[RMDB]
RNA sequence: GGGAACGACUCGAGUAGAGUCGAAAAUAAAAAGAUCGAAAGAUCAAAAGGCGUACAUGUUGUGGACCUUCACGUGGUGUGCGCUGUCAACUGACUGCUGUCAGGUUAACAGACAACAAAAAAAAAACGAGUACAAUUAGUUCGCUAAUUGUACUCGAAAAGAAACAACAACAACAAC
Reactivity to DMS in 0.01 (KOAc 150mM, MgCl2 10mM, bicine 150mM(pH8.5), 24C), signal-to-noise 2, nucleotides 027 to 126: u010a030a060a090a180a120g000a000u010c000g010a140a030a140g000a010u000c000a040a040a120a060g010g000c010g030u000a000c010a070u000g010u020u000g040u010g010g010a100c170c130u020u010c060a070c160g000u010g000g020u000g010u000g000c000g000c010u000g010u000c110a060a120c010u010g000a000c010u020g040c290u000g020u000c010a010g010g000u030u020a070a060c060a060g020a020c060a020a010c050a030a010a010a000a010a040a110a080a090a140
Reactivity to 2A3 in 0.01 (KOAc 150mM, MgCl2 10mM, bicine 150mM(pH8.5), 24C), signal-to-noise 2, nucleotides 027 to 126: u140a000a090a020a020a000g020a020u010c010g020a090a040a070g030a000u000c030a050a090a000a070g010g000c010g000u000a010c000a000u070g030u170u120g000u190g030g100a140c060c040u050u060c140a010c040g120u100g160g010u000g010u000g000c000g000c000u000g010u010c010a040a060c010u010g000a000c010u130g070c030u110g150u020c000a020g030g020u030u060a070a010c030a040g050a010c010a020a000c040a100a100a040a000a000a010a000a000a050a070

Chemical mapping of a 177-nucleotide RNA with DMS and 2A3. For 2A3, 1,528 sequencing reads were counted.